RNA sequence: GGGAACGACUCGAGUAGAGUCGAAAAUCCUUUCUCGAUAGAGAUUGGAGUCAUACAACCCCAGAAACCAUUCCUUAUAGCUUGAGUAUUGCUGAAUUCAGUUUAGCGUGCAUGCUCUUGGCUAUUCAUACCAAGGACAACUUCGGUUGUCCUUGAACAUGUAAACUGGCUUCGGCCAGUUUACAUGAAAAGAAACAACAACAACAAC
Reactivity to DMS in 0.01 (KOAc 150mM, MgCl2 10mM, bicine 150mM(pH8.5), 24C), signal-to-noise 2, nucleotides 027 to 156: u010c010c000u000u000u000c030u000c020g020a300u010a140g010a000g010a000u010u020g040g010a010g000u000c090a140u020a120c070a070a160c030c000c000c020a080g020a190a090a070c060c010a180u020u010c010c050u000u000a110u000a050g010c010u000u010g010a090g040u000a030u000u010g020c000u010g010a060a070u000u020c150a230g020u020u000u000a050g010c050g030u010g020c110a180u000g000c020u000c010u000u010g010g000c000u000a060u010u000c160a090u010a120c120c000a010a020g030g020a040c000a020a010c000u000u000c300g050g040u020u000g020u010c010c000u000u000g060a030a200
Reactivity to 2A3 in 0.01 (KOAc 150mM, MgCl2 10mM, bicine 150mM(pH8.5), 24C), signal-to-noise 4, nucleotides 027 to 156: u000c000c000u020u000u010c070u020c030g220a300u200a250g010a000g000a000u020u020g010g000a000g050u070c050a040u090a200c050a060a100c020c020c000c020a020g100a110a050a040c090c030a150u130u170c040c050u140u250a030u000a020g000c010u010u050g000a000g010u030a070u220u180g040c020u030g060a080a060u140u220c070a080g230u040u060u170a050g070c040g020u040g020c020a000u020g000c000u000c000u020u040g050g000c000u020a000u040u080c010a030u110a220c050c000a000a000g000g000a000c000a000a000c010u040u100c160g130g010u000u000g000u000c000c000u000u010g000a000a000